About this RNA:
Chemical mapping of a 177-nucleotide RNA with 2A3. Conditions: 150 mM KOAc, 10 mM MgCl2 and 150 mM bicine (pH 8.5), 24 C. For 2A3 the reverse transcriptase was SuperScript II with manganese. The 2A3 profile rests on 505 reads.
[RMDB]
RNA sequence: GGGAACGACUCGAGUAGAGUCGAAAAAGGUCGAUCCCCGAGCAGUUCCUGAUCUAUGUCGCCCACGCGCUCAGGGGUGAUUUUGGGGUGUCGGCGGCAGAUGGUCGCGAAGUAUUCGCCGUCAUUGAGGUAUAUGAGCCUUCGGGCUCAUAUACCUAAAAGAAACAACAACAACAAC
Reactivity to 2A3 in 0.01 (KOAc 150mM, MgCl2 10mM, bicine 150mM(pH8.5), 24C), signal-to-noise 1, nucleotides 027 to 126: a000g090g010u040c000g010a040u060c000c000c000c000g000a000g040c020a020g000u000u000c060c000u000g000a040u000c020u020a090u090g010u000c000g000c060c010c000a010c000g020c000g120c000u000c000a000g000g060g000g250u170g230a200u040u130u000u010g020g030g000g000u020g050u080c000g000g000c000g000g020c000a000g010a010u220g020g000u020c000g000c020g000a000a110g130u200a230u050u050c020g010c040c050g090u130c000a040u000u110g090